[RMDB]
RNA sequence: GGGAACGACUCGAGUAGAGUCGAAAAUGAGGGAAUCAAGAUCGUGGAAGUGGAUGAGCAUGAUACGAGCAAAGCGUGUUGUGUCUGCGGUCGGACAGACGAGAAUCAACGUGUUGAACGCGGGCUGUACGUCUGUGAGUCGUGCGAUGCAGCGUUCACUAGCCAAUGGCUUCGGCCAUUGGCUAGUAAAAGAAACAACAACAACAAC
Reactivity to 2A3 in 0.01 (KOAc 150mM, MgCl2 10mM, bicine 150mM(pH8.5), 24C), signal-to-noise 1, nucleotides 027 to 156: u000g060a020g000g050g000a050a060u100c120a030a070g010a010u140c050g000u110g020g020a030a000g000u090g020g110a120u090g010a030g040c050a030u060g090a000u040a060c070g000a060g070c110a070a070a100g030c060g000u000g000u190u090g000u000g040u040c010u040g140c040g060g000u020c000g000g040a010c000a000g030a000c000g000a040g020a090a060u120c040a030a010c060g010u040g040u080u060g130a070a000c030g000c040g020g060g060c030u000g010u000a000c000g040u000c010u060g160u100g070a040g120u010c040g000u000g020c050g100a270u030g050c060a050g000c000g020u000u010c000
An RNA of 207 nucleotides, treated with 2A3 and read out base by base. High 2A3 reactivity points to a flexible backbone, as in loops and unpaired stretches. Source: RMDB library OK3TST, as collected in RNAgym. Reactivities are rounded to 0.1 and cut off at 0 and 3.